[RMDB]
RNA sequence: GGGAACGACUCGAGUAGAGUCGAAAAGAUAUGGACGUUCUGGAGAGCACAUUUCGGAAACGAAAUGGGCUCUAUGAAGGAGACGUCCUAAGUCAAACAAAAUCUUUUGUUCGCAAAAGAUUUUGAACAACAGAACAGAGUUCGCUCUGUUCUGUUGAAAAGAAACAACAACAACAAC
Reactivity to DMS in 0.01 (KOAc 150mM, MgCl2 10mM, bicine 150mM(pH8.5), 24C), signal-to-noise 3, nucleotides 027 to 126: g010a010u000a020u010g000g000a010c000g000u000u010c000u000g010g000a010g000a000g030c010a040c000a000u000u010u000c000g020g010a010a010a020c010g010a000a000a010u000g000g000g020c000u000c000u010a100u020g010a210a270g000g010a020g010a020c000g010u000c000c000u000a010a050g000u000c010a150a140a300c010a010a000a000a010u000c000u000u000u000u000g000u000u020c230g020c010a010a000a010a010g000a000u000u000u000u000g000a130a210
Reactivity to 2A3 in 0.01 (KOAc 150mM, MgCl2 10mM, bicine 150mM(pH8.5), 24C), signal-to-noise 1, nucleotides 027 to 126: g020a000u010a000u060g000g000a000c010g010u020u010c020u010g000g000a010g010a010g030c000a000c000a050u000u000u010c000g010g000a020a010a000c000g000a000a010a000u010g000g000g000c030u040c000u010a060u000g000a000a000g020g040a050g060a050c000g000u000c000c000u000a000a000g000u000c010a130a090a060c010a000a030a020a000u000c000u030u020u010u030g050u060u090c300g000c130a020a020a010a010g000a000u010u010u010u020g020a040a050

Description
The data come from the RNA Mapping Database (RMDB), library TTRDEL. This 177-nucleotide RNA was probed chemically with DMS and 2A3. Values are in units of 0.01, from 0 to 300, in steps of 10. Reactivities are given for positions 27 through 126. The RNA was probed in 150 mM KOAc, 10 mM MgCl2 and 150 mM bicine (pH 8.5) at 24 C. 2A3 adducts were read by reverse transcription with SuperScript II with manganese.